[RMDB]
RNA sequence: GGGAACGACUCGAGUAGAGUCGAAAAGGAGAUCGAAGACGACUUCACGAUUUCCAACCGACGUCAGCACGGUCAGGAUGUAGGUCCGCAUGCAUCCAAGUUGACGAAAAGCGGACAAGAAGUCAAAGGCUAGCAUCAACUUCGGUUGAUGCUAGCCAAAAGAAACAACAACAACAAC
Reactivity to 2A3 in 0.01 (KOAc 150mM, MgCl2 10mM, bicine 150mM(pH8.5), 24C), signal-to-noise 2, nucleotides 027 to 126: g000g000a000g010a000u020c030g100a110a040g250a230c130g010a010c010u020u000c050a000c020g000a010u000u000u000c010c000a000a010c020c000g040a060c040g020u010c000a030g010c040a020c060g110g220u120c090a080g020g000a000u010g000u000a000g000g000u000c000c000g020c010a000u000g000c000a000u000c000c020a010a030g030u020u030g020a000c040g010a010a000a060a000g000c000g000g000a000c020a020a050g040a000a000g030u060c000a040a000a000